[RMDB]
Overview:
Chemical mapping of a 207-nucleotide RNA with 2A3 and DMS. The RNA was probed in 150 mM KOAc, 10 mM MgCl2 and 150 mM bicine (pH 8.5) at 24 C. The DMS profile rests on 3,898 reads. It was measured as part of the RMDB library OK3TST.
RNA sequence: GGGAACGACUCGAGUAGAGUCGAAAAAUAUUGAGAAGAACUAUAAGCAGGUGCAUGGUGAUUUGCCAGGCGUAGCGCCAAGGAUUUACUUCACUUAUAAGUAUCUCCAGGAAAUGUGUAAAAAUGCCGAGAAACAGAGAGGGCUGAAGAGCCUCAAAUCAUAUUCCUAAUUCGUUAGGAAUAUGAUAAAAGAAACAACAACAACAAC
Reactivity to 2A3 in 0.01 (KOAc 150mM, MgCl2 10mM, bicine 150mM(pH8.5), 24C), signal-to-noise 4, nucleotides 027 to 156: a010u120a040u040u120g020a040g020a090a020g020a060a020c050u050a060u060a300a030g040c070a020g010g060u040g020c030a050u080g020g050u060g070a250u100u070u200g030c030c030a010g030g000c030g040u060a010g050c030g010c050c000a040a060g030g000a000u000u030u050a000c010u030u060c130a090c150u200u110a100u030a300a000g000u000a000u000c010u000c010c000a010g000g000a040a070a050u120g030u000g000u090a020a060a050a040a000u070g000c020c020g030a020g040a060a090a000c030a010g030a000g010a020g050g020g010c030u030g030a090a010g000a020g100c010c020u030c010a080a110
Reactivity to DMS in 0.01 (KOAc 150mM, MgCl2 10mM, bicine 150mM(pH8.5), 24C), signal-to-noise 2, nucleotides 027 to 156: a090u020a100u020u000g010a150g000a110a090g000a060a090c020u000a070u000a080a100g050c070a050g010g030u000g020c010a040u010g020g020u000g010a130u000u010u010g020c070c060a110g030g000c030g010u000a070g040c060g000c020c010a090a180g030g000a090u000u000u000a020c020u000u000c100a180c160u010u010a110u010a050a050g000u000a030u000c030u000c000c010a120g020g000a040a060a080u000g010u000g010u000a050a070a020a080a100u000g000c010c010g030a030g010a080a060a070c070a160g010a080g000a090g000g000g010c030u020g000a070a080g020a060g000c020c020u020c030a020a060